Notes:
Structure probing data (2A3 and DMS) for a 177-nucleotide construct. The reactions ran in a buffer of 150 mM KOAc, 10 mM MgCl2 and 150 mM bicine (pH 8.5), at 24 C. 2A3 is a SHAPE reagent: it acylates the 2'-hydroxyl of flexible nucleotides of all four kinds. For 2A3, 6,046 sequencing reads were counted.
[RMDB]
RNA sequence: GGGAACGACUCGAGUAGAGUCGAAAACUUUGCACUCUUGCUACCACCCUUGGAAAGACUCAUAUUGCUACUUACUUCACCAGAUUCACCAGUGUCACCUCAGACACCGUACGGCCGGAGCCUGUAGGUACAGAAGGAUGUUCGCAUCCUUCUGUACAAAAGAAACAACAACAACAAC
Reactivity to 2A3 in 0.01 (KOAc 150mM, MgCl2 10mM, bicine 150mM(pH8.5), 24C), signal-to-noise 4, nucleotides 027 to 126: c010u100u070u160g000c030a050c040u050c010u060u060g020c020u040a060c000c030a040c020c020c000u010u040g050g030a120a060a000g030a050c000u020c080a050u080a060u150u130g010c020u010a060c030u070u040a040c010u050u070c040a030c070c030a050g020a220u060u030c020a030c090c020a020g020u000g000u050c020a050c060c030u070c030a020g010a030c010a030c020c000g060u070a040c030g010g000c040c010g030g000a010g030c000c000u080g080u120a050g050
Reactivity to DMS in 0.01 (KOAc 150mM, MgCl2 10mM, bicine 150mM(pH8.5), 24C), signal-to-noise 4, nucleotides 027 to 126: c080u000u000u000g000c060a080c070u000c040u000u010g020c050u000a090c080c040a060c050c010c010u000u010g000g000a080a090a080g000a080c040u010c050a090u010a080u010u010g000c050u000a070c040u000u000a080c090u010u010c050a050c040c020a070g000a100u010u000c060a050c100c040a080g020u000g010u000c040a060c080c050u000c090a090g000a050c030a040c020c040g010u000a090c120g010g020c040c030g000g000a110g010c030c010u000g010u000a040g000